[RMDB]
RNA sequence: GGGAACGACUCGAGUAGAGUCGAAAAUACAGGAAGCACUUUACAGCUUCUGUAUGGCUGAAUUGCCAGCAUCACUACUCUUGUGCUUUGGGGCCAUUAUUAAGUAAAACGAGGGUUAGUUGAACACAAGCACUUGGAUAUUGCAUACUGCCACAGAGAUUAGUGACGGAUUCGUCCGUCACUAAUCAAAAGAAACAACAACAACAAC
Reactivity to DMS in 0.01 (KOAc 150mM, MgCl2 10mM, bicine 150mM(pH8.5), 24C), signal-to-noise 2, nucleotides 027 to 156: u010a030c030a080g030g040a050a010g050c000a150c120u000u010u010a160c180a150g000c000u000u000c020u010g000u000a000u010g010g030c010u000g030a130a170u020u000g010c040c040a150g000c070a120u010c050a070c020u000a020c020u010c020u010u010g010u010g020c030u000u030u010g000g030g000g040c020c010a030u000u000a050u000u000a040a160g020u000a040a020a070a110c050g000a030g050g020g000u010u000a050g000u000u000g000a090a080c070a110c030a050a100g010c020a050c050u000u010g010g010a150u000a060u000u000g030c050a080u000a060c030u000g020c030c010a070c050a180g010a240
Reactivity to 2A3 in 0.01 (KOAc 150mM, MgCl2 10mM, bicine 150mM(pH8.5), 24C), signal-to-noise 4, nucleotides 027 to 156: u040a010c030a010g200g070a040a000g010c020a030c130u190u190u210a090c170a040g010c010u000u000c000u030g010u020a060u070g040g000c020u040g060a180a050u190u170g060c050c010a010g010c020a040u050c010a010c030u050a040c000u020c010u020u060g050u050g030c030u050u030u040g000g000g010g020c010c020a000u010u030a040u060u060a140a040g040u050a020a030a080a020c050g020a090g000g030g020u070u080a050g040u040u110g090a080a010c050a010c010a070a050g030c030a010c040u020u040g040g010a030u070a060u130u080g000c000a040u080a130c050u050g020c030c020a070c020a050g060a000